[RMDB]
The record gives the reactivity of an RNA of 177 nucleotides to DMS.
The RNA was probed in 150 mM KOAc, 10 mM MgCl2 and 150 mM bicine (pH 8.5) at 24 C.
Source: RMDB library OK2TRN, as collected in RNAgym.
RNA sequence: GGGAACGACUCGAGUAGAGUCGAAAAUUAGCAUGGCGUACUUCUCCUGUUAGAACCGGAGUUUGAAACCAAACUUCGCCUCAGGAGGAUAGAUGGGGCGAUUCAGGUGAGAUCCAAUGUAGAUCCAGAUCAGCCUUUCAUUCGUGAAAGGCUGAUCAAAAGAAACAACAACAACAAC
Reactivity to DMS in 0.01 (KOAc 150mM, MgCl2 10mM, bicine 150mM(pH8.5), 24C), signal-to-noise 1, nucleotides 027 to 126: u000u000a110g010c020a080u000g020g030c090g010u040a010c140u010u010c000u000c000c000u010g000u020u010a020g010a120a090c300c040g000g000a020g030u020u000u000g000a190a160a110c240c010a030a010a020c020u010u000c000g030c180c010u000c010a010g000g000a040g010g030a020u000a050g000a120u000g020g000g020g020c090g020a030u020u000c080a120g000g020u020g020a260g010a040u010c010c020a080a100u020g010u020a060g000a040u010c030c060a200